[RMDB]
RNA sequence: GGGAACGACUCGAGUAGAGUCGAAAAUUGCGCCUCCGAUUCGCCGUCGGCAUUUCCCCAGCAGCCACGACCUACCAGGCUGCGGUGCGGCUCGCCGCACAGGUCAUCCCUCAUCGGGCGCGUCCUGGAUAGGGCUAUACUUUCGAGUAUAGCCCAAGCUAAAUUAUUGUUUCGACAAUAAUUUAGCAAAAGAAACAACAACAACAAC
Reactivity to 2A3 in 0.01 (KOAc 150mM, MgCl2 10mM, bicine 150mM(pH8.5), 24C), signal-to-noise 4, nucleotides 027 to 156: u100u090g020c020g010c020c020u070c050c010g040a070u080u110c060g010c070c020g030u050c020g000g030c040a060u060u040u060c000c030c000c000a040g000c010a000g010c010c010a120c120g040a060c000c030u150a200c060c030a020g010g000c000u010g000c000g000g000u030g000c030g010g020c030u050c130g070c000c000g040c000a010c010a020g020g030u030c030a120u060c020c020c020u090c040a090u060c040g020g000g000c010g010c020g020u050c010c010u000g030g020a070u080a210g010g010g000c000u000a000u000a000c000u030u080u140c220g080a010g010u000a010u000a010g000c020c000c000a000a000
Reactivity to DMS in 0.01 (KOAc 150mM, MgCl2 10mM, bicine 150mM(pH8.5), 24C), signal-to-noise 2, nucleotides 027 to 156: u000u000g010c020g020c020c000u010c030c020g020a120u000u000c060g020c050c090g000u000c010g030g050c130a170u010u000u000c000c030c020c050a130g000c030a070g000c020c010a220c070g020a070c140c040u050a220c080c040a150g020g040c030u000g010c010g000g030u020g030c040g030g030c080u000c260g040c000c000g000c040a050c040a040g030g000u000c070a130u020c010c010c000u010c060a110u000c070g000g020g030c040g020c020g030u010c020c000u020g010g010a220u010a090g010g040g000c000u010a020u000a010c010u000u000u000c240g000a040g020u000a010u000a000g000c000c000c000a010a050

The record gives the reactivity of an RNA of 207 nucleotides to 2A3 and DMS. Conditions: 150 mM KOAc, 10 mM MgCl2 and 150 mM bicine (pH 8.5), 24 C. The DMS profile rests on 4,661 reads. Reactivities are given for positions 27 through 156.